[RMDB]
RNA sequence: GGGAACGACUCGAGUAGAGUCGAAAAGACACACUUUGCAGAUGACCUCCUCGUUGGUGAGUGUCGGUAAUGUUGUCAGUCACAGGCAACAGUUAACGAUCUGCUUAAAUAAAAAGAGAAGAACAAAGAUACGUCAGCCUUUCGAGGCUGACGUAUCAAAAGAAACAACAACAACAAC
Reactivity to 2A3 in 0.01 (KOAc 150mM, MgCl2 10mM, bicine 150mM(pH8.5), 24C), signal-to-noise 1, nucleotides 027 to 126: g070a000c000a000c020a030c160u190u200u190g000c030a000g000a070u000g030a010c000c000u060c000c020u070c020g210u060u220g120g040u020g010a000g000u020g000u000c060g000g000u120a080a020u020g000u000u000g000u000c030a090g090u030c040a060c060a120g000g000c000a000a000c000a010g000u000u030a010a000c000g000a000u000c000u000g020c000u000u020a070a140a000u080a020a070a030a000a000g100a000g000a060a000g020a050a050c020a070a080a000